Conditions: 150 mM KOAc, 10 mM MgCl2 and 150 mM bicine (pH 8.5), 24 C.
An RNA of 207 nucleotides, treated with DMS and 2A3 and read out base by base.
For DMS the reverse transcriptase was MarathonRT.
For 2A3, 2,945 sequencing reads were counted.
DMS (dimethyl sulfate) methylates the pairing face of unpaired adenines and cytosines.
2A3 adducts were read by reverse transcription with SuperScript II with manganese.

[RMDB]
RNA sequence: GGGAACGACUCGAGUAGAGUCGAAAACAUGAGUGUUGCACACGUCCAUCGCUUCCGCAUUCGUUAUCGGUGGUGUUUUCCAGUGAUACCGUGGUAUCGUCAAGCGAUUGCUCUUAUCUUCGGCGUUGGAGUCAUGACGAUUGCACUGUGGGCAAUCUGAAGAGCAUAAGUUCGCUUAUGCUCUUCAAAAAGAAACAACAACAACAAC
Reactivity to DMS in 0.01 (KOAc 150mM, MgCl2 10mM, bicine 150mM(pH8.5), 24C), signal-to-noise 4, nucleotides 027 to 156: c050a130u010g010a120g020u010g020u000u000g020c020a130c070a090c090g020u000c020c040a090u010c020g020c030u000u010c020c040g030c070a300u000u000c020g020u000u000a020u010c020g030g010u010g010g010u000g010u000u000u000u010c030c040a140g010u000g010a050u020a030c020c030g020u000g030g010u010a040u000c020g000u000c040a050a060g030c050g000a080u000u000g010c040u000c030u000u000a100u000c070u000u000c060g000g020c040g030u000u000g020g000a160g010u000c050a100u000g000a070c050g000a040u000u010g010c020a070c070u000g010u000g010g020g000c030a020a040u000c020
Reactivity to 2A3 in 0.01 (KOAc 150mM, MgCl2 10mM, bicine 150mM(pH8.5), 24C), signal-to-noise 5, nucleotides 027 to 156: c060a090u210g070a070g090u080g010u090u110g030c060a020c010a010c090g070u030c020c000a020u030c010g010c020u110u060c060c060g050c020a050u070u090c040g060u050u040a050u110c060g080g020u000g020g030u040g200u090u100u100u060c050c040a090g060u030g080a030u030a050c040c020g030u050g070g030u100a050u100c030g070u070c040a050a020g020c020g020a030u000u100g020c020u020c020u130u210a120u080c060u130u160c090g050g000c040g020u010u040g020g020a030g030u070c060a050u090g030a040c040g020a010u000u000g050c030a040c120u140g020u110g080g040g000c000a000a020u020c040